[RMDB]
RNA sequence: GGGAACGACUCGAGUAGAGUCGAAAACAACAGGGAGGUUGGAGGUGGACGAGCCACUCGCCAACCGGGUCAGGUCCGGAAGGAAGCAGCCCUAACGAGCCAGGCACGGGUCGCCGUGCCAGUACAAUCCGUAUAAGUCGUUCGCGACUUAUACGGAAAAAGAAACAACAACAACAAC
Reactivity to 2A3 in 0.01 (KOAc 150mM, MgCl2 10mM, bicine 150mM(pH8.5), 24C), signal-to-noise 1, nucleotides 027 to 126: c030a020a000c010a060g110g030g000a070g020g010u020u060g010g030a040g050g010u010g010g050a060c090g030a030g190c020c000a000c040u030c020g100c000c000a020a010c020c000g000g000g000u030c010a010g030g000u000c000c000g030g060a080a060g020g000a000a010g000c010a000g000c030c000c000u050a080a020c060g080a010g060c080c110a070g000g040c000a000c000g050g010g080u190c090g040c120c000g000u000g030c020c000a010g010u020a020c050a030a060
Reactivity to DMS in 0.01 (KOAc 150mM, MgCl2 10mM, bicine 150mM(pH8.5), 24C), signal-to-noise 2, nucleotides 027 to 126: c090a040a140c060a110g000g000g000a120g000g000u000u000g000g000a300g000g030u000g000g000a170c300g010a190g010c000c000a010c000u000c060g010c000c000a000a030c020c010g000g010g000u000c010a190g010g000u000c000c000g010g040a090a140g010g000a060a030g000c020a220g000c010c000c020u010a100a140c130g000a100g010c060c040a140g030g010c010a000c030g000g000g000u020c300g020c010c010g040u000g010c000c000a010g030u000a050c170a090a120
About this RNA
An RNA of 177 nucleotides, treated with 2A3 and DMS and read out base by base. 2A3 adducts were read by reverse transcription with SuperScript II with manganese. As a SHAPE reagent, 2A3 marks flexible, mostly unpaired nucleotides at the ribose 2'-OH. The reactions ran in a buffer of 150 mM KOAc, 10 mM MgCl2 and 150 mM bicine (pH 8.5), at 24 C. For DMS the reverse transcriptase was MarathonRT.